[RMDB]
An RNA of 177 nucleotides, treated with DMS and 2A3 and read out base by base. The reactions ran in a buffer of 150 mM KOAc, 10 mM MgCl2 and 150 mM bicine (pH 8.5), at 24 C. For 2A3 the reverse transcriptase was SuperScript II with manganese. For DMS the reverse transcriptase was MarathonRT. 2A3 is a SHAPE reagent: it acylates the 2'-hydroxyl of flexible nucleotides of all four kinds. Values cover nucleotides 27 to 126.
RNA sequence: GGGAACGACUCGAGUAGAGUCGAAAACACCUUUGCCCAUAUCAUGUGGGACUUUGACAAGCUCGGAGGUUUCUGAGGGUAAUCCACUCUGAAUGGGAUCAGGUCAGUCAUUUACUUUGUAUGCACAUCUAUGAACCUAGUUCGCUAGGUUCAUAGAAAAAGAAACAACAACAACAAC
Reactivity to DMS in 0.01 (KOAc 150mM, MgCl2 10mM, bicine 150mM(pH8.5), 24C), signal-to-noise 5, nucleotides 027 to 126: c160a080c030c020u010u000u010g020c020c010c010a020u010a130u000c080a050u030g010u000g000g000g000a070c130u000u000u000g020a110c120a160a140g010c040u000c020g030g010a050g010g010u000u020u000c020u000g000a040g010g000g000u000a100a120u010c020c020a050c010u000c160u000g020a050a050u010g000g000g000a140u000c080a050g020g010u000c120a080g000u010c070a040u010u010u010a070c110u000u000u000g010u000a060u000g010c160a060c180a150
Reactivity to 2A3 in 0.01 (KOAc 150mM, MgCl2 10mM, bicine 150mM(pH8.5), 24C), signal-to-noise 4, nucleotides 027 to 126: c060a030c020c000u040u100u260g030c020c000c000a020u040a090u060c040a040u100g010u010g000g040g040a030c040u120u070u170g100a060c040a090a110g030c010u000c010g050g010a060g130g140u160u300u030c010u050g020a020g000g030g020u050a030a040u010c010c000a010c050u090c050u040g020a040a020u030g010g000g040a020u120c040a000g020g020u020c020a000g030u040c000a070u060u060u140a120c110u070u140u150g080u100a040u120g060c070a030c000a120